Notes
The data come from the RNA Mapping Database (RMDB), library OK2TST. This 177-nucleotide RNA was probed chemically with DMS and 2A3. 2A3 adducts were read by reverse transcription with SuperScript II with manganese.

RNA sequence: GGGAACGACUCGAGUAGAGUCGAAAACGAUCAGCACGGCGAUGAGGAUCUUCGGGUACACCGUAUAGCCCAGCCACAUCACGAACAGCGGGGCGAAGGCCACCUUCGGCGCGAUCUGCAGCGCCAACUGCGAUGAUGGGUUCGCCCAUCAUCGCAGAAAAGAAACAACAACAACAAC
Reactivity to DMS in 0.01 (KOAc 150mM, MgCl2 10mM, bicine 150mM(pH8.5), 24C), signal-to-noise 1, nucleotides 027 to 126: c100g000a000u000c080a150g000c090a120c110g050g000c050g000a070u000g000a000g030g020a110u000c030u000u000c090g000g000g000u030a130c130a070c030c090g000u020a130u000a120g000c000c050c020a170g020c060c080a170c070a000u000c070a050c080g000a080a120c210a100g000c000g000g020g020g000c060g050a150a070g000g000c030c050a010c060c060u000u000c070g020g000c000g000c070g000a160u000c140u070g040c050a300g020c000g000c000c030a030a050
Reactivity to 2A3 in 0.01 (KOAc 150mM, MgCl2 10mM, bicine 150mM(pH8.5), 24C), signal-to-noise 1, nucleotides 027 to 126: c050g010a020u130c010a010g110c000a000c040g050g080c040g030a080u040g040a080g040g030a080u040c000u060u130c080g000g000g060u060a010c020a090c060c010g010u060a010u120a110g060c000c000c000a000g020c010c000a050c000a040u150c060a050c120g030a090a020c010a020g000c000g030g030g040g000c030g020a030a040g040g040c030c000a080c010c000u120u150c110g030g000c060g020c010g000a050u020c050u200g030c010a000g000c030g020c030c010a020a020